[RMDB]
RNA sequence: GGGAACGACUCGAGUAGAGUCGAAAAGCAAGAUGAUAUGCCAAAAAGCAAAGACCCAAUCGAAUGGUUUAUGUAUUUGAAAUCUUUGAAAUUUCAAAUACCCAAUGCGAUUAAAGACUUUGGGAGACGGUCUUCCCUGUUUCGACAGGGAAGACCGAAAAGAAACAACAACAACAAC
Reactivity to 2A3 in 0.01 (KOAc 150mM, MgCl2 10mM, bicine 150mM(pH8.5), 24C), signal-to-noise 1, nucleotides 027 to 126: g000c010a100a050g080a120u170g060a150u130a000u300g110c010c020a140a000a000a000a000g000c010a000a010a000g060a000c000c000c000a000a040u110c000g000a060a110u150g000g110u180u300u120a150u290g000u000a000u000u000u000g000a000a000a000u070c040u100u110u140g290a300a300a070u000u000u020c000a000a000a000u000a000c000c000c000a000a010u300g040c000g000a000u000u020a000a020a020g010a160c020u080u100u140g000g020g080a160g060a000

Chemical mapping of a 177-nucleotide RNA with 2A3. The 2A3 profile rests on 332 reads. The data come from the RNA Mapping Database (RMDB), library OK1LIB. Values cover nucleotides 27 to 126.